[RMDB]
RNA sequence: GGGAACGACUCGAGUAGAGUCGAAAAGAUAUGGAGGUAGGGAGCUGAGUGUCGGAAACGACACCAGCAUCGAUCUAUCCUCCUAAGUCAAAAGUGUAAAGAAUACCUUCGGGUAUUCUUUACACAACUCAGCAAGAAUGUUCGCAUUCUUGCUGAGAAAAGAAACAACAACAACAAC
Reactivity to DMS in 0.01 (KOAc 150mM, MgCl2 10mM, bicine 150mM(pH8.5), 24C), signal-to-noise 2, nucleotides 027 to 126: g000a060u010a300u000g000g030a000g020g010u020a000g000g000g000a030g000c020u000g040a120g010u010g000u000c000g020g010a050a050a180c020g010a040c000a000c000c000a000g030c000a100u000c160g000a030u000c000u000a000u010c000c000u000c010c010u000a020a080g010u020c070a080a050a110a090g010u000g030u000a010a010a000g000a030a000u000a000c000c020u000u000c170g030g000g010u000a000u000u010c000u000u000u000a010c000a010c000a020a050